[RMDB]
RNA sequence: GGGAACGACUCGAGUAGAGUCGAAAACGACAAGUUCGCUUGUCGAAAAAUCCUAAGUCACCAACAGCGGACGGACUUCAUCGAUCAUGGUCGGAAACGACCAUGGGAGAAGCGUCCGACAUGGUGAUAUGGAAAAAAACCGAGGUUCGCCUCGGAAGAAAUAUAUAUACUUCGGUAUAUAUAUUUCAAAAGAAACAACAACAACAAC
Reactivity to 2A3 in 0.01 (KOAc 150mM, MgCl2 10mM, bicine 150mM(pH8.5), 24C), signal-to-noise 3, nucleotides 027 to 156: c010g000a000c000a000a000g000u010u050c070g050c160u010u010g000u000c000g010a070a000a000a000a000u030c010c000u050a120a050g020u000c000a000c010c000a020a130c030a170g070c010g010g000a010c010g060g080a110c020u010u010c040a200u300c030g080a050u050c000a010u000g010g000u000c000g050g080a100a080a090c000g000a040c010c000a010u000g000g010g010a050g000a010a000g020c020g000u000c000c010g020a080c000a030u050g000g000u010g010a000u000a010u040g010g070a020a100a010a010a100a010a000c020c000g000a010g020g020u060u040c150g060c070c000u000c000g000g010a000a000
Reactivity to DMS in 0.01 (KOAc 150mM, MgCl2 10mM, bicine 150mM(pH8.5), 24C), signal-to-noise 1, nucleotides 027 to 156: c000g000a020c010a010a000g020u000u000c300g050c040u010u000g000u000c000g050a000a030a090a160a160u010c000c030u000a090a180g010u000c000a000c020c010a030a150c090a150g000c050g030g010a020c010g030g000a190c000u000u010c010a210u000c070g000a140u010c000a010u000g000g010u000c000g000g000a160a100a230c040g030a040c000c000a010u030g010g030g040a100g000a010a010g070c070g000u000c000c000g000a010c060a250u000g010g000u000g000a010u000a200u000g010g000a000a000a090a060a080a140a140c010c000g000a020g000g000u000u000c230g040c010c000u000c000g000g000a050a060

This 207-nucleotide RNA was probed chemically with 2A3 and DMS. The RNA was probed in 150 mM KOAc, 10 mM MgCl2 and 150 mM bicine (pH 8.5) at 24 C. The DMS profile rests on 1,939 reads. 2A3 adducts were read by reverse transcription with SuperScript II with manganese.